[RMDB]
RNA sequence: GGGAACGACUCGAGUAGAGUCGAAAAGAUAUGGAGCAAGACAUGAACAUGUAUCGGAAACGAUAUGGGUUCAACAGCUUGACUCCUAAGUCAAAGCUAAUGGUAUCCUUCGGGAUACCAUUAGCAAGUCAAAUUAAAGGUUCGCCUUUAAUUUGACAAAAGAAACAACAACAACAAC
Reactivity to 2A3 in 0.01 (KOAc 150mM, MgCl2 10mM, bicine 150mM(pH8.5), 24C), signal-to-noise 4, nucleotides 027 to 126: g010a000u080a030u160g000g000a000g010c010a020a010g010a130c060a170u110g010a000a010c010a040u040g000u010a010u000c020g000g070a100a030a050c010g010a010u000a010u020g070g030g000u010u020c020a040a060c060a080g060c000u150u010g090a300c000u010c000c000u000a060a010g050u080c110a150a080a010g000c000u010a000a010u020g000g010u000a010u000c020c000u060u110c300g040g000g000a000u020a010c010c000a000u000u000a000g000c000a000a000
Reactivity to DMS in 0.01 (KOAc 150mM, MgCl2 10mM, bicine 150mM(pH8.5), 24C), signal-to-noise 7, nucleotides 027 to 126: g000a040u010a300u000g000g000a010g010c010a020a010g010a040c080a270u010g000a010a010c000a040u000g010u000a000u010c000g010g000a120a070a190c000g000a010u000a000u000g010g000g010u000u000c000a020a090c300a140g000c000u000u000g000a120c000u000c000c000u000a020a080g010u010c040a080a140a150g000c000u000a000a000u000g000g000u000a010u000c000c000u000u010c190g020g010g010a010u000a000c000c000a000u000u000a000g010c000a020a030

An RNA of 177 nucleotides, treated with 2A3 and DMS and read out base by base. 2A3 adducts were read by reverse transcription with SuperScript II with manganese. Conditions: 150 mM KOAc, 10 mM MgCl2 and 150 mM bicine (pH 8.5), 24 C.